This 177-nucleotide RNA was probed chemically with DMS and 2A3. The RNA was probed in 150 mM KOAc, 10 mM MgCl2 and 150 mM bicine (pH 8.5) at 24 C. Values cover nucleotides 27 to 126. 2A3 is a SHAPE reagent: it acylates the 2'-hydroxyl of flexible nucleotides of all four kinds. For DMS the reverse transcriptase was MarathonRT. The DMS profile rests on 7,568 reads.

RNA sequence: GGGAACGACUCGAGUAGAGUCGAAAAGAUAUGGACGAUGCACAACAGCAUGCGUUCGGAAACGAACGUCAUGACAUGUGUAAGUCCUAAGUCAAAACCACAGUGUGCCUUCGGGCACACUGUGGAACACUAACUUCAUCUUCGGAUGAAGUUAGUGAAAAGAAACAACAACAACAAC
Reactivity to DMS in 0.01 (KOAc 150mM, MgCl2 10mM, bicine 150mM(pH8.5), 24C), signal-to-noise 6, nucleotides 027 to 126: g000a040u000a260u010g010g010a010c010g020a200u010g000c010a020c020a050a100c270a140g010c010a010u000g010c000g010u000u000c000g000g000a080a060a120c000g000a010a000c010g010u010c010a010u000g000a080c130a110u000g010u000g010u000a130a300g000u000c000c000u000a020a080g010u000c030a080a080a130a210c010c000a020c000a010g010u000g010u000g000c000c000u000u000c260g030g000g000c000a000c000a000c000u000g010u000g000g000a020a070
Reactivity to 2A3 in 0.01 (KOAc 150mM, MgCl2 10mM, bicine 150mM(pH8.5), 24C), signal-to-noise 8, nucleotides 027 to 126: g020a000u030a020u070g000g010a010c030g070a130u300g040c010a010c020a140a240c090a250g120c000a010u010g000c000g000u000u000c010g000g010a030a030a000c000g000a010a010c000g140u230c150a010u010g180a230c070a210u040g000u000g010u020a020a010g000u000c000c000u000a050a000g010u010c030a020a030a110a170c000c000a010c000a010g010u010g000u000g000c000c020u090u210c300g040g000g000c000a000c000a000c000u000g000u000g000g010a000a010